[RMDB]
RNA sequence: GGGAACGACUCGAGUAGAGUCGAAAAGUGGCGGGGAUAAGCGUCGGACUGCUAAGAAAAAAGUUGAGUCGUCGAUUUCUGGCUUGCUCAGACAGGAAGAUGCCAAAUACUCCGAGCUAUGAACAUAACUUGAUGCUUACUUCGGUAAGCAUCAAGUAAAAGAAACAACAACAACAAC
Reactivity to 2A3 in 0.01 (KOAc 150mM, MgCl2 10mM, bicine 150mM(pH8.5), 24C), signal-to-noise 1, nucleotides 027 to 126: g080u060g120g100c000g010g000g000g020a030u000a090a030g010c020g040u010c000g000g030a020c000u010g030c020u070a080a060g220a150a170a020a040a010a040g040u100u070g010a020g000u020c040g000u050c050g080a120u080u290u040c100u130g000g120c030u080u120g000c000u000c030a030g020a170c000a000g000g040a000a000g000a010u000g040c020c000a090a140a060u130a130c030u000c020c020g000a010g000c010u040a080u150g080a090a030c040a050u170a130
Reactivity to DMS in 0.01 (KOAc 150mM, MgCl2 10mM, bicine 150mM(pH8.5), 24C), signal-to-noise 2, nucleotides 027 to 126: g010u010g020g060c020g010g000g000g000a130u020a130a230g010c010g050u000c030g000g020a270c000u010g000c050u000a070a070g010a010a030a110a060a050a060g010u000u000g040a070g050u010c300g010u000c110g010a120u000u020u010c020u010g100g020c010u000u000g010c080u000c020a030g020a120c060a070g000g020a220a140g010a000u000g010c020c010a030a090a160u000a130c010u000c000c000g020a300g010c040u020a060u010g030a050a120c080a100u000a080